RNA sequence: GGGAACGACUCGAGUAGAGUCGAAAAAGGAUCUUCGGAUCCUGCAACUCCUAAGUCCAGCGGGAGGUCGGUAGGAGCUUUGAUCUAUCGGAAACGAUAGGGAGCUCCAAACGACCUUUGAUCGCUGGAUAUGGACCGAGAGGGCCUUCGGGCCCAAUGUUAUAAUCACGUUCGCGUGAUUAUAACAAAAAGAAACAACAACAACAAC
Reactivity to DMS in 0.01 (KOAc 150mM, MgCl2 10mM, bicine 150mM(pH8.5), 24C), signal-to-noise 2, nucleotides 027 to 156: a000g010g010a040u000c000u000u000c300g080g020a000u010c000c000u000g030c080a090a070c070u000c010c010u010a060a260g000u000c010c010a010g030c010g050g030g000a020g020g020u000c010g000g000u020a300g010g030a040g020c010u010u000u000g020a120u000c010u000a040u000c000g010g010a210a180a300c000g010a030u000a000g020g030g040a000g010c020u000c000c010a040a030a130c030g010a010c000c000u000u000u010g000a060u000c000g000c000u030g010g030a000u000a030u020g010g020a060c040c040g000a180g000a180g020g000g010c020c010u010u010c260g030g000g030c000c010c010a000a030
Reactivity to 2A3 in 0.01 (KOAc 150mM, MgCl2 10mM, bicine 150mM(pH8.5), 24C), signal-to-noise 2, nucleotides 027 to 156: a010g030g000a000u050c060u150u210c300g090g000a000u010c000c000u020g000c010a090a140c020u020c000c000u000a170a000g050u010c010c000a000g010c010g000g020g000a000g000g000u000c010g030g000u050a040g010g010a000g000c010u300u090u090g050a060u050c000u000a010u000c000g020g070a180a060a020c020g000a000u000a000g000g000g000a000g010c020u010c000c030a030a000a000c000g000a000c000c000u030u000u010g050a050u040c000g000c000u000g000g000a000u000a000u000g010g000a000c010c020g110a080g050a050g080g000g000c000c000u050u100c200g040g020g020c000c000c130a010a000